[RMDB]
Notes: Structure probing data (2A3 and DMS) for a 207-nucleotide construct. DMS adducts were read by reverse transcription with MarathonRT. Conditions: 150 mM KOAc, 10 mM MgCl2 and 150 mM bicine (pH 8.5), 24 C. For DMS, 6,734 sequencing reads were counted. For 2A3, 3,590 sequencing reads were counted. The data come from the RNA Mapping Database (RMDB), library OK3TST.
RNA sequence: GGGAACGACUCGAGUAGAGUCGAAAACAGCGCAGGGUUCUGAAUAUGAUUUUGUUAUUUAUUCACAGACUGCGGAAACAGCGCAUUCUGUCAAUGUAAAUAGAUUCAAUGUUGCUAUUACACGUGCUAAGAAGGGUAUUCUCUGUGUCAUGAGUAGGUUCAGGACAUUAUUCGUAAUGUCCUGAACAAAAGAAACAACAACAACAAC
Reactivity to 2A3 in 0.01 (KOAc 150mM, MgCl2 10mM, bicine 150mM(pH8.5), 24C), signal-to-noise 5, nucleotides 027 to 156: c020a010g040c020g010c030a030g010g000g030u140u120c050u060g090a090a040u130a110u100g070a080u040u120u140u060g080u020u030a070u070u130u030a030u010u050c010a000c000a000g000a020c020u000g000c000g010g030a130a210a020c110a050g070c000g000c010a010u000u000c000u010g020u020c050a040a060u070g050u080a060a050a030u060a060g080a060u060u100c060a060a050u100g020u070u070g040c010u030a050u080u080a050c050a010c090g030u060g010c030u030a050a020g030a030a030g090g000g000u060a110u130u040c020u000c020u030g010u010g020u070c030a090u080g020a030g090u120a050g050
Reactivity to DMS in 0.01 (KOAc 150mM, MgCl2 10mM, bicine 150mM(pH8.5), 24C), signal-to-noise 3, nucleotides 027 to 156: c030a070g020c060g040c010a050g000g000g030u020u010c040u000g020a080a100u000a060u010g010a100u000u000u000u000g010u000u010a060u000u000u010a020u000u010c030a050c000a050g040a070c070u010g000c020g010g010a120a090a110c130a110g020c030g020c040a170u000u000c010u000g010u000c050a080a110u000g030u000a030a040a090u000a060g000a070u000u000c020a050a140u000g020u000u000g000c010u000a090u010u000a070c050a070c050g020u000g000c040u010a050a080g010a070a080g010g020g010u000a100u000u000c060u000c010u000g030u000g030u000c040a080u000g010a120g020u000a110g020